[RMDB]
RNA sequence: GGGAACGACUCGAGUAGAGUCGAAAAGAUAUGGACCCAGUAAUUUCGCGCAGUUUCGGAAACGAAACUGAACUACGAACUACGAACCACUGGGUCCUAAGUCAAAAGCGGCUCUUCGGAGCCGCAACAUCAGGUAACAGUUCGCUGUUACCUGAUGAAAAGAAACAACAACAACAAC
Reactivity to 2A3 in 0.01 (KOAc 150mM, MgCl2 10mM, bicine 150mM(pH8.5), 24C), signal-to-noise 3, nucleotides 027 to 126: g010a000u010a010u050g000g000a000c000c000c010a000g020u050a020a200u120u220u250c130g000c030g040c090a000g010u000u000u010c010g000g000a010a020a010c000g000a010a000a010c010u000g000a040a020c060u130a080c070g200a180a020c080u200a100c300g070a050a040c040c020a010c070u010g000g060g000u000c000c000u000a000a000g000u000c010a060a050a010a080g010c000g010g000c010u000c000u070u120c280g140g010a010g000c040c000g000c000a000a010
Reactivity to DMS in 0.01 (KOAc 150mM, MgCl2 10mM, bicine 150mM(pH8.5), 24C), signal-to-noise 2, nucleotides 027 to 126: g000a060u000a270u010g010g000a000c010c000c010a000g000u000a090a170u000u000u000c010g020c300g010c000a020g020u000u020u000c000g000g000a070a040a160c000g020a000a010a010c000u000g000a040a060c060u020a100c060g000a060a080c210u020a140c210g000a080a090c300c150a020c010u000g010g010g000u000c000c020u000a020a110g000u010c040a080a050a120a150g010c010g010g020c010u000c000u010u020c190g020g000a020g020c010c000g000c010a010a030